[RMDB]
RNA sequence: GGGAACGACUCGAGUAGAGUCGAAAACUGCUUUGCACAGCUCUGCACGCCGUAGGCAGUGGGAAAUUUACCUAUGAUCGUAGUGGAUGUAACCUCAAAGAAAAGUCGAAAUUCGUCGAUCGGUCAAGUCUUGCCUCGGCUUCGGCCGAGGCAAGACAAAAGAAACAACAACAACAAC
Reactivity to 2A3 in 0.01 (KOAc 150mM, MgCl2 10mM, bicine 150mM(pH8.5), 24C), signal-to-noise 1, nucleotides 027 to 126: c080u080g000c080u150u180u030g010c040a080c050a000g000c000u000c000u300g000c060a040c010g000c000c000g000u000a000g080g080c220a220g000u020g120g040g020a020a210a180u300u300u000a110c000c000u000a000u080g040a000u000c000g000u040a110g000u140g120g060a060u140g000u050a000a000c060c070u150c160a300a000a000g290a000a060a000a000g200u110c120g000a010a010a000u300u300c000g080u000c020g000a000u000c000g000g000u000c000a050a020

This 177-nucleotide RNA was probed chemically with 2A3.
Source: RMDB library OK1LIB, as collected in RNAgym.